[RMDB]
RNA sequence: GGGAACGACUCGAGUAGAGUCGAAAAUGCAAGUAGUGCUAUUGUUGGAAUCACCGUACAUAUUUAGGUUUACGCUCCAAGAUCGGUGGAUAGCAGCCCUAUCAAUAUCUAGGAGAACUGUGCUAUGAAAACGGUAUUGGCUUCGGCCAAUACCGAACCUAUAUGGAAACUUCGGUUUCCAUAUAGGAAAAGAAACAACAACAACAAC
Reactivity to DMS in 0.01 (KOAc 150mM, MgCl2 10mM, bicine 150mM(pH8.5), 24C), signal-to-noise 3, nucleotides 027 to 156: u000g020c060a070a130g030u010a040g030u000g020c020u010a060u000u000g000u010u000g010g010a120a110u010c040a070c030c040g000u000a100c070a070u000a070u000u000u010a080g020g030u010u010u010a070c130g020c030u000c020c020a070a100g000a060u000c110g020g030u000g020g010a070u000a040g010c070a150g010c120c130c020u000a100u010c020a070a110u000a070u000c050u000a100g010g020a120g010a060a100c060u000g020u000g050c040u010a070u000g000a120a070a060a190c010g020g040u000a000u000u000g010g000c010u000u000c300g060g020c000c000a020a000u000a000c000c000g010a000a030
Reactivity to 2A3 in 0.01 (KOAc 150mM, MgCl2 10mM, bicine 150mM(pH8.5), 24C), signal-to-noise 6, nucleotides 027 to 156: u110g030c050a050a040g070u080a010g030u100g040c030u060a040u080u080g070u030u040g030g060a070a100u070c010a020c020c010g090u080a060c070a070u190a100u130u180u150a070g000g020u030u090u080a050c070g020c020u000c020c030a040a030g020a070u060c040g030g060u030g030g040a040u030a030g020c050a010g010c030c010c000u020a050u100c040a060a070u050a030u250c030u040a040g000g050a070g030a050a020c040u050g030u030g070c020u050a040u190g080a030a060a030a060c020g000g000u000a000u010u000g000g000c010u010u030c120g090g000c010c000a000a000u000a000c000c000g000a000a000
An RNA of 207 nucleotides, treated with DMS and 2A3 and read out base by base.
The data come from the RNA Mapping Database (RMDB), library M2RFPK.
The 2A3 profile rests on 4,302 reads.
Reactivities are given for positions 27 through 156.
The reactions ran in a buffer of 150 mM KOAc, 10 mM MgCl2 and 150 mM bicine (pH 8.5), at 24 C.